[RMDB]
RNA sequence: GGGAACGACUCGAGUAGAGUCGAAAAGAUCGCGAUAUGAGUACGUACGGAUCAGUACACUGGAUCCGACAGUACCACUCUAGGUACGUACAGGUACGAGUCGCGUACUCGAUGAUCGCGCGGCCAGUAGGUUCACGUCAUUCGUGACGUGAACCUAAAAAGAAACAACAACAACAAC
Reactivity to DMS in 0.01 (KOAc 150mM, MgCl2 10mM, bicine 150mM(pH8.5), 24C), signal-to-noise 2, nucleotides 027 to 126: g010a080u000c010g000c000g000a000u000a100u000g000a040g010u000a020c020g010u000a130c180g060g050a040u000c060a280g000u000a010c070a090c060u000g000g000a050u010c150c150g020a160c130a110g030u000a020c000c000a120c240u020c190u000a100g010g000u000a040c010g030u010a060c050a020g010g020u010a010c000g000a170g010u000c020g000c010g000u000a020c010u000c020g020a100u030g000a000u000c030g000c040g000c130g030g040c020c000a100g010
Reactivity to 2A3 in 0.01 (KOAc 150mM, MgCl2 10mM, bicine 150mM(pH8.5), 24C), signal-to-noise 2, nucleotides 027 to 126: g060a160u110c030g000c010g000a010u020a040u120g010a020g000u000a010c020g010u020a060c090g060g000a020u040c000a080g040u030a050c300a120c120u060g050g020a080u100c110c060g000a000c040a020g010u010a000c000c000a110c030u210c160u140a080g000g020u000a030c000g030u040a110c000a000g000g020u010a000c000g010a050g000u070c040g000c000g030u010a000c010u020c070g100a120u160g050a010u010c000g000c020g010c010g000g020c010c000a030g090

This 177-nucleotide RNA was probed chemically with DMS and 2A3. The RNA was probed in 150 mM KOAc, 10 mM MgCl2 and 150 mM bicine (pH 8.5) at 24 C. DMS adducts were read by reverse transcription with MarathonRT. Values cover nucleotides 27 to 126. It was measured as part of the RMDB library OK2TRN.